[RMDB]
RNA sequence: GGGAACGACUCGAGUAGAGUCGAAAACAACAGAUGAAGAUGGCAUUGUAGAAGGUUGUCCUCAUUGUGCUAACCGUUCAAUAAAAUUAGAUACUAUUCCUGCUAAAUGGCUUAAAGAUUAUCAUCACAAUUCACUGCUAUUCGUAGCAGUGAAUUGAAAAGAAACAACAACAACAAC
Reactivity to DMS in 0.01 (KOAc 150mM, MgCl2 10mM, bicine 150mM(pH8.5), 24C), signal-to-noise 4, nucleotides 027 to 126: c060a100a100c130a060g010a050u010g010a040a080g010a040u000g000g000c030a060u000u000g010u010a090g010a090a060g000g020u000u000g020u000c020c020u000c090a080u000u000g020u000g000c030u000a070a120c080c070g010u000u000c070a040a030u000a050a080a100a090u010u010a070g000a100u000a040c070u000a110u000u000c020c010u000g000c060u000a040a110a070u000g010g000c040u010u000a020a040a120g020a070u010u000a070u000c080a070u010c150a170
Reactivity to 2A3 in 0.01 (KOAc 150mM, MgCl2 10mM, bicine 150mM(pH8.5), 24C), signal-to-noise 4, nucleotides 027 to 126: c040a020a000c030a030g070a060u060g020a040a020g020a040u050g020g000c010a030u010u090g120u150a070g070a160a020g050g000u020u030g020u050c000c010u010c020a040u040u040g040u030g070c020u040a060a030c020c000g060u110u060c070a070a050u110a150a100a020a020u110u090a050g030a060u020a100c020u040a100u040u110c010c000u000g040c020u090a150a200a090u140g050g010c020u030u140a070a090a040g060a080u160u100a070u140c030a010u060c020a010
An RNA of 177 nucleotides, treated with DMS and 2A3 and read out base by base. DMS adducts were read by reverse transcription with MarathonRT. For 2A3 the reverse transcriptase was SuperScript II with manganese. Conditions: 150 mM KOAc, 10 mM MgCl2 and 150 mM bicine (pH 8.5), 24 C. Source: RMDB library OK2TST, as collected in RNAgym. Reactivities are given for positions 27 through 126.